[RMDB]
RNA sequence: GGGAACGACUCGAGUAGAGUCGAAAAGUACACCCUCCCUCCCUCCCAAAAGCCCGCAAAUAAAGGGAGGGACUCAGGGAUGAGUAGGCCAAAAGGCCAUAUCCCGAAGACGCGCGACGGGACAAAAGAAGAAGUAUUUCUUCGGAAAUACUUCUUCAAAAGAAACAACAACAACAAC
Reactivity to 2A3 in 0.01 (KOAc 150mM, MgCl2 10mM, bicine 150mM(pH8.5), 24C), signal-to-noise 2, nucleotides 027 to 126: g050u070a030c030a140c070c010c010u030c000c000c000u010c000c000c000u000c020c020c000a060a100a020a000g060c000c040c000g040c070a100a080a040u160a090a090a000g000g000g000a020g000g000g000a010c000u040c030a040g010g020g000a010u040g030a030g100u300a160g020g000c020c000a090a290a210a250g010g000c020c010a020u050a020u070c000c000c010g000a060a010g060a040c090g030c000g000c010g180a040c000g000g050g000a050c050a010a160a010a030
Reactivity to DMS in 0.01 (KOAc 150mM, MgCl2 10mM, bicine 150mM(pH8.5), 24C), signal-to-noise 2, nucleotides 027 to 126: g000u010a080c170a250c010c000c030u010c010c010c010u000c010c000c000u000c000c040c010a070a100a080a160g010c020c000c000g020c080a050a030a050u010a070a190a090g010g010g010a010g010g000g020a050c030u000c130a160g010g010g000a010u000g020a100g030u000a110g020g000c010c000a060a070a140a100g000g020c000c010a090u000a060u000c000c010c020g000a090a090g010a130c160g000c080g030c080g000a060c010g020g010g000a120c160a010a070a120a180
Conditions: 150 mM KOAc, 10 mM MgCl2 and 150 mM bicine (pH 8.5), 24 C. An RNA of 177 nucleotides, treated with 2A3 and DMS and read out base by base. It was measured as part of the RMDB library M2PK90.